[RMDB]
Structure probing data (DMS) for a 177-nucleotide construct.
For DMS the reverse transcriptase was MarathonRT.
Conditions: 150 mM KOAc, 10 mM MgCl2 and 150 mM bicine (pH 8.5), 24 C.

RNA sequence: GGGAACGACUCGAGUAGAGUCGAAAAGGAAGAGUCUGAACGCUUGUUAAAAGAGCUAGACGCUGAAAUGAAAACGAUCAGGAGAAAAGCCCGGAUUAACAGUGUGAGAAGAGUAAUACAAAAAAUCCGUACAUCAUUCGUUCGCGAAUGAUGUACGAAAAGAAACAACAACAACAAC
Reactivity to DMS in 0.01 (KOAc 150mM, MgCl2 10mM, bicine 150mM(pH8.5), 24C), signal-to-noise 2, nucleotides 027 to 126: g010g010a150a080g000a130g040u000c030u000g040a150a180c080g010c000u000u050g000u010u020a050a060a130a130g000a030g000c020u010a040g000a260c250g010c000u030g050a060a130a040u000g000a170a100a120a110c300g020a120u010c040a130g010g000a100g000a050a240a160a100g010c050c060c020g020g020a190u000u000a020a100c080a040g000u010g040u000g000a130g010a040a040g010a040g010u000a030a100u010a130c120a000a010a030a140a190a040u000c040